[RMDB]
RNA sequence: GGGAACGACUCGAGUAGAGUCGAAAACUGCUUAAGCGAGUUUCUAGUGCCACUUUGUCACUAGUUUGUAUUAUGAGUUUCACACUCACUUCAAUGACGGUGAUAGAUACUACAUAUCACUCCUGCUUAGAGGGUCAUCUAAGCUAAACCAUGUGAACAUGUAGUUCUUCUUCGGAAGAACUACAUGAAAAGAAACAACAACAACAAC
Reactivity to 2A3 in 0.01 (KOAc 150mM, MgCl2 10mM, bicine 150mM(pH8.5), 24C), signal-to-noise 7, nucleotides 027 to 156: c020u030g050c040u200u210a080a020g040c060g060a010g050u010u060u030c000u010a000g000u000g040c040c020a170c170u200u160u300g060u080c010a000c010u010a020g010u020u030u080g090u040a170u160u050a080u120g010a010g010u010u020u050c030a030c000a010c030u020c020a050c050u170u150c120a150a170u170g080a080c070g030g010u010g000a000u010a030g050a020u110a170c040u020a030c110a120u030a010u010c010a000c030u040c000c030u070g010c000u000u000a010g000a010g050g040g040u090c030a020u000c020u000a000a010g000c000u010a030a020a040c070c050a050u070g010u010g020a020a020
Reactivity to DMS in 0.01 (KOAc 150mM, MgCl2 10mM, bicine 150mM(pH8.5), 24C), signal-to-noise 2, nucleotides 027 to 156: c060u000g010c030u000u010a090a200g010c010g010a070g030u000u000u000c010u000a170g040u010g000c020c070a120c300u010u010u010g000u000c020a040c000u010a050g030u010u010u010g020u010a070u000u010a050u000g000a060g010u010u000u000c160a150c150a090c000u000c000a040c040u000u000c130a090a110u000g010a070c040g030g020u000g010a050u000a000g040a090u000a060c050u000a060c040a160u000a130u000c010a020c000u010c040c010u000g000c000u000u000a010g000a040g020g010g000u000c130a090u000c020u000a040a020g020c020u010a040a060a090c060c020a080u000g000u000g010a040a300

Structure probing data (2A3 and DMS) for a 207-nucleotide construct. Reactivities are given for positions 27 through 156. As a SHAPE reagent, 2A3 marks flexible, mostly unpaired nucleotides at the ribose 2'-OH. The data come from the RNA Mapping Database (RMDB), library ARCHII. The reactions ran in a buffer of 150 mM KOAc, 10 mM MgCl2 and 150 mM bicine (pH 8.5), at 24 C. For 2A3 the reverse transcriptase was SuperScript II with manganese.